[RMDB]
RNA sequence: GGGAACGACUCGAGUAGAGUCGAAAAGGGGUCUCGAUUGUCAGUAAGUCAGCUUGGAUUUACAGACUGAAGCCUCCACGGUCUGUUGUCAGCUGACGAUGCUUGGAUUUAUCGAGACGGAGGCACCCAAAGCGAAACUAGUUCGCUAGUUUCGCAAGGAUCCUUAUGCGUUCGCGCAUAAGGAUCCAAAAGAAACAACAACAACAAC
Reactivity to 2A3 in 0.01 (KOAc 150mM, MgCl2 10mM, bicine 150mM(pH8.5), 24C), signal-to-noise 1, nucleotides 027 to 156: g140g000g000g030u000c030u000c010g000a010u000u000g010u060c000a040g070u110a050a300g000u030c000a000g000c060u250u300g170g000a100u260u190u300a020c000a000g000a000c000u000g110a120a040g000c000c020u070c000c030a020c000g010g010u000c000u160g040u010u030g000u120c160a000g000c000u000g000a000c000g000a070u300g000c000u040u180g180g000a030u060u280u290a000u000c010g010a000g000a000c000g000g000a000g000g000c020a040c000c020c000a030a090a000g000c020g000a030a000a000c000u000a000g070u110u090c110g040c240u000a000g000u000u070u050c000g030c010a010a030